[RMDB]
RNA sequence: GGGAACGACUCGAGUAGAGUCGAAAAUGAGGAUUUCGAUCCUCAGGACUGGGGUCUCACAACAGCUUUCGACUCUAUAAUCAUACUGAAGCCUCCACGGUAUGGUAGAGUGGACAUGUGAGACGGAGGCACCCGACAUGCGAUAUUCGUAUCGCAAUACAGGAAGACGGUUCGCCGUCUUCCUGUAAAAAGAAACAACAACAACAAC
Reactivity to 2A3 in 0.01 (KOAc 150mM, MgCl2 10mM, bicine 150mM(pH8.5), 24C), signal-to-noise 2, nucleotides 027 to 156: u020g010a010g020g010a010u070u060u260c260g170a030u000c000c000u000c000a000g050g050a020c190u290g050g000g120g050u030c050u040c070a050c040a070a180c070a080g090c120u120u300u260c200g100a100c020u010c000u000a050u050a150a250u130c000a000u000a000c000u000g010a060a000g010c000c000u040c000c000a000c000g000g010u010a010u000g000g060u000a000g000a000g030u230g060g050a020c010a040u020g000u000g010a010g000a000c010g000g000a020g000g010c010a040c000c000c000g020a020c040a150u190g000c000g020a000u000a000u020u180c240g020u070a000u000c000g000c000a000a020